[RMDB]
RNA sequence: GGGAACGACUCGAGUAGAGUCGAAAAAGAGAAAGUUUCGACUUUCUCUAAAAGGUCCGGUAGUUCAGUUGGUUAGAAUGCCUGCCUGUCACGCAGGAGGUCGCGGGUUCGAGUCCCGUCCGGACCGCCAAAAUCUGAUUAUGUUCGCAUAAUCAGAACUUAUUCAUUAGUUCGCUAAUGAAUAAGUAAAAGAAACAACAACAACAAC
Reactivity to DMS in 0.01 (KOAc 150mM, MgCl2 10mM, bicine 150mM(pH8.5), 24C), signal-to-noise 4, nucleotides 027 to 156: a050g010a030g000a010a010a010g010u010u000u000c200g010a090c010u010u000u000c000u000c000u000a010a040a090a150g010g010u000c020c010g000g020u000a090g010u000u000c030a120g010u000u010g020g010u000u000a060g010a050a030u000g010c000c000u000g040c050c030u000g030u020c190a100c160g000c010a060g000g010a050g010g000u000c040g010c010g000g000g000u000u000c040g010a300g010u000c000c000c010g010u000c010c010g000g010a010c000c040g040c030c040a010a060a080a150u010c000u010g010a030u000u000a010u010g000u000u010c300g000c000a030u000a000a000u010c000a010g000a020
Reactivity to 2A3 in 0.01 (KOAc 150mM, MgCl2 10mM, bicine 150mM(pH8.5), 24C), signal-to-noise 4, nucleotides 027 to 156: a000g010a010g000a010a010a000g010u060u110u170c150g030a030c010u010u010u000c000u000c000u010a040a100a010a030g000g000u000c000c000g010g000u020a020g020u010u010c030a020g010u210u110g250g110u120u090a000g000a010a000u020g010c000c000u010g000c000c050u220g190u210c080a030c150g000c000a000g000g010a010g010g000u110c010g010c000g000g000g000u000u000c000g000a000g000u000c000c000c000g000u000c000c000g000g010a000c000c000g000c000c000a050a060a000a050u020c000u010g000a000u000u000a000u000g040u030u070c260g000c090a000u010a000a000u010c000a000g010a010